RNA sequence: GGGAACGACUCGAGUAGAGUCGAAAAUGACUUUGGUGGUACCAACUUGCGUGUUUGUUGGAUCCAACUUCUCGGUGACGGCAAGUAUGAGAUGAAGCACAGCAAGUCCGUCUUGCCCCGUGAAUGACACCACUCACUACUUCGGUAGUGAGUGGUGAAAAGAAACAACAACAACAAC
Reactivity to DMS in 0.01 (KOAc 150mM, MgCl2 10mM, bicine 150mM(pH8.5), 24C), signal-to-noise 3, nucleotides 027 to 126: u010g020a110c100u000u000u010g000g020u000g010g030u000a300c040c050a050a050c100u000u010g020c060g000u000g000u000u000u000g010u000u010g000g000a210u010c000c030a080a050c060u000u000c020u000c010g000g000u010g000a280c160g020g010c080a040a010g000u000a020u030g010a210g010a020u000g010a130a130g020c020a090c190a080g010c010a030a240g010u000c030c050g010u000c010u010u010g000c000c000c030c050g040u000g000a040a060u030g020a300
Reactivity to 2A3 in 0.01 (KOAc 150mM, MgCl2 10mM, bicine 150mM(pH8.5), 24C), signal-to-noise 2, nucleotides 027 to 126: u120g030a000c090u050u030u130g070g000u030g020g090u080a070c010c000a030a050c030u040u140g050c130g130u060g030u060u080u070g000u010u020g030g000a030u000c000c000a070a070c000u070u020c030u010c010g090g050u080g140a140c040g010g010c010a000a030g030u090a060u050g220a300g000a150u020g040a030a010g030c040a070c090a300g010c000a030a000g000u000c000c000g000u010c000u000u020g000c020c000c000c000g030u000g060a050a070u120g040a010

Chemical mapping of a 177-nucleotide RNA with DMS and 2A3. For DMS, 1,666 sequencing reads were counted. The RNA was probed in 150 mM KOAc, 10 mM MgCl2 and 150 mM bicine (pH 8.5) at 24 C. Reactivities are rounded to 0.1 and cut off at 0 and 3.